Chemical mapping of a 177-nucleotide RNA with DMS and 2A3. 2A3 is a SHAPE reagent: it acylates the 2'-hydroxyl of flexible nucleotides of all four kinds. The 2A3 profile rests on 2,058 reads. The reactions ran in a buffer of 150 mM KOAc, 10 mM MgCl2 and 150 mM bicine (pH 8.5), at 24 C. Values cover nucleotides 27 to 126. For DMS the reverse transcriptase was MarathonRT.
RNA sequence: GGGAACGACUCGAGUAGAGUCGAAAAAGCGGGCCGCGAAACUCGCUGAUGCCCUUGAUGUCCGGCAGUUUGGGCGCGCUGAGCGGACCCGCGGCCGACACCGUGAUGUCGGCGGUGAACGCGCCCAAGUAGCAUCCACUUUCGAGUGGAUGCUACUAAAAGAAACAACAACAACAAC
Reactivity to DMS in 0.01 (KOAc 150mM, MgCl2 10mM, bicine 150mM(pH8.5), 24C), signal-to-noise 3, nucleotides 027 to 126: a080g010c010g030g000g010c020c030g010c170g010a140a130a120c030u000c050g010c000u010g010a170u010g020c020c010c060u000u010g010a110u010g000u010c030c020g010g000c020a040g010u000u020u000g000g000g030c010g030c020g030c030u000g010a170g000c000g000g000a090c000c070c080g020c040g000g000c000c000g020a050c010a030c040c230g000u010g000a100u010g010u000c000g010g010c010g000g010u020g000a050a080c110g000c010g010c000c000c000a100
Reactivity to 2A3 in 0.01 (KOAc 150mM, MgCl2 10mM, bicine 150mM(pH8.5), 24C), signal-to-noise 2, nucleotides 027 to 126: a000g020c030g020g000g040c050c030g070c060g050a030a060a080c040u060c060g010c030u020g010a040u130g000c020c010c010u010u100g180a150u080g030u010c030c000g050g060c020a030g000u100u140u080g040g010g000c000g000c000g020c060u070g030a080g090c040g000g030a120c030c020c020g100c000g000g090c000c000g020a010c010a010c010c100g250u250g110a190u020g010u020c000g010g000c050g000g030u110g050a030a000c030g000c000g000c000c000c000a000